[RMDB]
RNA sequence: GGGAACGACUCGAGUAGAGUCGAAAAGAUAUGGAGCGAGUCCUUCAUCGAUCGUACACCGAGUAGAUACUAUAUCGGAAACGAUAUAGUAUCGAAACUGUACGGGAGAAGAACUCGCUCCUAAGUCCGAGAAUUACCUGUUCGCAGGUAAUUCUCGAAAAGAAACAACAACAACAAC
Reactivity to 2A3 in 0.01 (KOAc 150mM, MgCl2 10mM, bicine 150mM(pH8.5), 24C), signal-to-noise 1, nucleotides 027 to 126: g020a020u050a030u090g010g000a000g000c010g010a000g010u010c020c070u000u010c050a300u300c050g030a060u040c010g030u020a010c040a030c140c010g040a050g110u130a050g020a000u010a000c000u000a000u010a000u010c010g060g000a020a020a010c010g000a000u010a000u000a010g000u010a000u010c000g000a030a010a000c020u020g000u000a010c000g000g000g000a050g000a000a020g000a010a020c000u000c000g000c010u000c000c010u000a000a000g000u000c000
Reactivity to DMS in 0.01 (KOAc 150mM, MgCl2 10mM, bicine 150mM(pH8.5), 24C), signal-to-noise 2, nucleotides 027 to 126: g000a050u010a250u000g000g010a000g020c000g020a010g010u010c030c010u000u010c000a300u020c300g000a050u020c010g010u000a010c000a030c300c090g000a110g000u020a100g000a010u000a010c000u000a010u000a010u000c000g000g000a090a100a100c010g020a020u000a000u000a010g020u000a000u000c000g030a140a110a070c280u030g010u000a010c000g010g000g010a030g000a020a000g000a010a010c000u000c010g010c010u000c000c000u000a010a100g000u010c030